[RMDB]
RNA sequence: GGGAACGACUCGAGUAGAGUCGAAAAGUCGUCGCAGGCGACAAGAGCGAACCCGACCUGGGCCUGGACCAACCGAUGUGGCGGCGGCUGGCCGAAACCGUGGAUUUGAUUGUCGAUUCCGCGGCGAACCCGGGUUGAGGUUCGCCUCAACCCGGGUAAAAGAAACAACAACAACAAC
Reactivity to 2A3 in 0.01 (KOAc 150mM, MgCl2 10mM, bicine 150mM(pH8.5), 24C), signal-to-noise 3, nucleotides 027 to 126: g040u000c000g000u020c010g010c220a110g020g040c010g050a000c040a020a060g060a040g090c030g010a050a020c030c010c000g010a020c040c090u100g010g000g010c000c000u090g030g060a190c010c020a070a070c030c000g100a100u190g070u130g260g000c020g020g000c000g010g050c010u000g000g030c000c020g040a060a060a000c000c000g000u070g000g070a140u000u000u080g150a180u090u180g080u130c010g010a010u110u000c000c000g000c000g020g010c000g000a020
Reactivity to DMS in 0.01 (KOAc 150mM, MgCl2 10mM, bicine 150mM(pH8.5), 24C), signal-to-noise 1, nucleotides 027 to 126: g000u000c000g080u000c030g010c070a080g000g000c000g000a000c050a030a000g000a120g000c070g000a000a050c000c000c000g000a100c120c110u040g010g020g000c040c060u050g000g030a180c060c040a060a070c030c050g000a130u000g000u070g000g020c040g030g000c190g000g000c000u000g000g010c030c000g000a080a140a060c080c030g000u090g000g000a020u000u000u010g000a300u000u000g000u010c040g020a150u020u010c000c020g010c000g020g000c020g030a030